[RMDB]
RNA sequence: GGGAACGACUCGAGUAGAGUCGAAAAACGCAUCAUACGUGUUGCGAGAACUACAGUUCCGCUCCUCUAGCACACAGAGGUCAAUUGGGUGCGACCCCCCCCUCUCCCGUGGGUCAACGGGAACCAAAAAAGACCCUUUAGUUCGCUAAAGGGUCAACGAUAUCAACGCGUUCGCGCGUUGAUAUCGAAAAGAAACAACAACAACAAC
Reactivity to 2A3 in 0.01 (KOAc 150mM, MgCl2 10mM, bicine 150mM(pH8.5), 24C), signal-to-noise 1, nucleotides 027 to 156: a000c020g000c000a010u010c000a010u110a210c200g060u150g060u050u190g010c060g000a300g030a100a000c040u160a170c070a130g000u000u010c000c000g000c010u080c000c010u030c010u020a080g160c120a060c030a030c010a140g000a000g000g030u020c010a050a120u160u180g070g010g000u000g020c030g110a150c020c000c000c020c000c000c000c000u040c000u000c020c000c000g010u010g000g020g000u130c070a000a000c000g010g000g010a000a000c000c000a030a030a030a030a030a030g000a000c030c000c040u010u020u000a000g000u010u010c130g000c220u000a000a000a000g000g000g000u000c000a000a000
The record gives the reactivity of an RNA of 207 nucleotides to 2A3.
The data come from the RNA Mapping Database (RMDB), library M2RFPK.
The RNA was probed in 150 mM KOAc, 10 mM MgCl2 and 150 mM bicine (pH 8.5) at 24 C.
Values are in units of 0.01, from 0 to 300, in steps of 10.